[RMDB]
RNA sequence: GGGAACGACUCGAGUAGAGUCGAAAACACCCACAUCUCCUAUCUCGAAGCACAUGUGGGAAUACCCGAAUUCAUAUGCAUGCGUUACAACCCGGGGCCACUCAAGAAGGGGAAUGCCAUCAUCGGGAAGUGGUUGGAAAUUCGUUUCCAACCACUUAAAAGAAACAACAACAACAAC
Reactivity to 2A3 in 0.01 (KOAc 150mM, MgCl2 10mM, bicine 150mM(pH8.5), 24C), signal-to-noise 1, nucleotides 027 to 126: c010a030c000c040c000a000c040a100u010c070u050c040c000u070a180u250c070u100c080g140a090a040g040c040a030c020a100u040g000u030g000g000g070a010a010u100a050c010c000c010g030a040a100u140u080c050a050u140a030u240g020c020a070u070g040c030g050u070u060a050c060a110a080c000c040c000g000g040g040g000c020c010a090c010u030c020a020a090g050a020a060g100g040g050g060a070a030u040g010c000c000a040u090c000a000u040c040g000g030g000
Reactivity to DMS in 0.01 (KOAc 150mM, MgCl2 10mM, bicine 150mM(pH8.5), 24C), signal-to-noise 2, nucleotides 027 to 126: c210a200c020c010c010a070c080a070u000c040u000c060c000u000a120u030c040u010c090g000a050a100g010c260a050c100a030u000g010u000g000g000g000a100a010u000a090c050c000c040g030a050a140u000u000c070a120u010a080u000g000c060a060u010g040c050g010u010u000a080c230a120a140c020c010c030g020g020g000g000c090c060a080c030u000c070a060a050g000a100a050g010g000g000g000a050a060u010g000c050c070a070u000c130a050u000c010g000g020g000